[RMDB]
RNA sequence: GGGAACGACUCGAGUAGAGUCGAAAAGAGGACGUUCUACUGGCUGUUUCCGGAGUAGUUCGUCCGAAGCAGAGGCUGCCACCGGUCUGCAAACACUUCAGGGCUGUUUUGUCACCUGUUGUGGAGAGGGUUCCAUCUCGUUCGCGAGGUGGAACCCAAAAGAAACAACAACAACAAC
Reactivity to DMS in 0.01 (KOAc 150mM, MgCl2 10mM, bicine 150mM(pH8.5), 24C), signal-to-noise 2, nucleotides 027 to 126: g000a250g000g000a000c000g000u000u010c010u010a000c000u000g050g010c120u000g010u000u000u000c000c000g020g000a010g050u030a010g000u000u000c020g000u000c000c000g000a060a050g040c020a050g000a190g010g000c040u020g000c030c000a040c130c020g000g000u000c060u000g000c060a160a120a130c050a010c010u020u010c020a060g000g000g030c050u020g000u020u010u010u020g010u030c050a220c050c000u000g000u010u000g010u000g000g010a200g010a180
Reactivity to 2A3 in 0.01 (KOAc 150mM, MgCl2 10mM, bicine 150mM(pH8.5), 24C), signal-to-noise 2, nucleotides 027 to 126: g200a050g000g000a000c000g000u000u000c000u000a000c000u050g190g020c070u080g100u080u080u080c040c000g030g010a020g000u010a000g000u000u000c000g000u000c000c000g010a070a000g000c000a010g020a030g060g000c020u060g050c010c020a060c000c000g040g050u020c020u030g000c000a010a020a040c020a020c000u000u020c010a010g000g000g050c070u030g160u120u170u230u130g110u120c060a090c110c010u020g000u010u000g010u050g000g020a100g050a040